[RMDB]
RNA sequence: GGGAACGACUCGAGUAGAGUCGAAAAAGGCGUCAGAACCGCGCCCCAGUGCAUCGCCGUCAUGUACAGCGUUUGCAGGGUAGUUUCCUGGCCGCCGUUGACAUUCUGGGCCGAAGUCAUUGCGCUGCCAGGUACCCAGAUUCGUCUGGGUACCUGGAAAAGAAACAACAACAACAAC
Reactivity to DMS in 0.01 (KOAc 150mM, MgCl2 10mM, bicine 150mM(pH8.5), 24C), signal-to-noise 1, nucleotides 027 to 126: a130g010g010c020g010u000c080a130g000a100a100c300c080g000c080g000c030c010c010c210a160g030u010g000c000a040u000c020g010c010c010g030u000c030a130u000g030u000a030c010a040g000c010g010u000u000u000g010c000a100g030g000g000u010a100g000u000u000u010c050c020u000g000g010c010c030g010c020c010g000u010u000g020a050c050a090u000u000c010u000g000g000g000c110c060g000a040a070g010u010c000a040u010u000g000c050g010c040u000g000
Reactivity to 2A3 in 0.01 (KOAc 150mM, MgCl2 10mM, bicine 150mM(pH8.5), 24C), signal-to-noise 1, nucleotides 027 to 126: a000g040g010c040g030u020c030a040g050a080a060c040c020g000c030g110c040c000c000c000a160g130u140g000c020a030u010c020g050c070c020g030u080c030a130u280g090u170a030c010a020g000c020g070u130u100u070g040c040a040g000g010g000u020a040g050u050u050u060c030c030u020g020g000c040c050g020c030c010g010u020u060g000a050c050a120u070u010c070u120g090g050g050c000c030g030a050a010g010u030c020a120u080u090g010c040g030c050u020g060